[RMDB]
RNA sequence: GGGAACGACUCGAGUAGAGUCGAAAAAAGCACCUGUCUGAUAAGCAGUUUGAGAGGUUAAAUACUUUCUCUUUCCAAGUUGGUCAGACUUAUGGAAUUACCACUAUUGAGACUGACAAAUUUUUGAAUGGCAAGUUUCCAUCAGACUUCCAAAAGAAAUGACUACGGAAUUCGUUCCGUAGUCAUUAAAAGAAACAACAACAACAAC
Reactivity to DMS in 0.01 (KOAc 150mM, MgCl2 10mM, bicine 150mM(pH8.5), 24C), signal-to-noise 1, nucleotides 027 to 156: a070a080g020c040a070c130c000u000g010u020c010u040g030a060u010a080a050g060c010a220g000u000u030u000g050a040g030a080g000g010u000u010a070a080a140u010a030c040u000u010u000c010u000c020u010u000u000c010c020a040a250g030u000u000g020g050u010c030a050g010a080c010u000u010a050u010g010g010a130a160u000u000a100c050c030a070c070u000a090u000u000g030a080g000a110c080u000g000a100c080a070a080a120u000u000u010u000u020g000a080a090u000g000g020c020a050a070g040u000u000u000c000c040a140u000c080a070g000a120c030u000u000c070c040a080a050a070a130g010a110
Reactivity to 2A3 in 0.01 (KOAc 150mM, MgCl2 10mM, bicine 150mM(pH8.5), 24C), signal-to-noise 2, nucleotides 027 to 156: a020a000g060c020a020c050c020u040g020u000c010u020g020a020u010a130a000g020c010a020g020u020u030u050g000a020g000a020g000g060u070u050a060a060a080u170a040c020u140u300u020c010u000c000u010u000u000c020c000a050a040g040u060u060g130g010u020c000a000g020a030c020u020u060a030u070g000g000a050a000u110u060a120c020c090a030c100u070a050u070u090g030a030g040a030c020u050g030a030c040a080a130a130u130u160u080u130u120g030a050a030u100g030g000c050a050a070g030u000u050u000c030c010a040u010c050a030g030a050c000u090u040c030c060a050a090a000a030g080a040